[RMDB]
RNA sequence: GGGAACGACUCGAGUAGAGUCGAAAACAAACAUGUCCAAGAGAACAAAAUUUAUUGGAAACCUUUUAGGAUAAUCAGCGGCGAGGCCAAGAUUAUCGAACUUCACGUCGCACCAUUGCAAAGGUUCGUACCCGCAUAAUUUCGAUUAUGCGGGUACAAAAGAAACAACAACAACAAC
Reactivity to 2A3 in 0.01 (KOAc 150mM, MgCl2 10mM, bicine 150mM(pH8.5), 24C), signal-to-noise 4, nucleotides 027 to 126: c020a000a100a010c050a080u130g040u030c000c000a040a020g040a000g040a100a020c060a010a100a140a080u080u190u170a100u030u080g050g030a030a030a030c000c010u010u020u040u110a100g000g000a020u040a060a090u110c040a030g030c020g050g000c040g090a050g090g000c070c020a050a050g010a060u060u090a050u120c040g010a000a030c000u070u060c010a010c070g040u010c000g000c000a040c050c000a050u020u170g030c020a020a050a080g020g000u010u040c030
Reactivity to DMS in 0.01 (KOAc 150mM, MgCl2 10mM, bicine 150mM(pH8.5), 24C), signal-to-noise 2, nucleotides 027 to 126: c070a120a120a210c240a140u000g000u000c010c000a030a000g010a090g010a090a050c080a070a090a070a170u000u050u000a060u000u000g000g000a020a110a090c000c000u000u000u000u000a100g000g000a050u000a000a050u000c060a090g010c210g010g010c020g010a040g030g030c090c030a030a300g000a080u000u030a020u000c050g000a080a060c160u000u000c030a020c070g020u000c050g040c030a250c030c070a110u010u010g000c100a040a170a010g000g040u000u000c140

This 177-nucleotide RNA was probed chemically with 2A3 and DMS. The DMS profile rests on 1,841 reads. The data come from the RNA Mapping Database (RMDB), library OK1LIB. The RNA was probed in 150 mM KOAc, 10 mM MgCl2 and 150 mM bicine (pH 8.5) at 24 C. For DMS the reverse transcriptase was MarathonRT.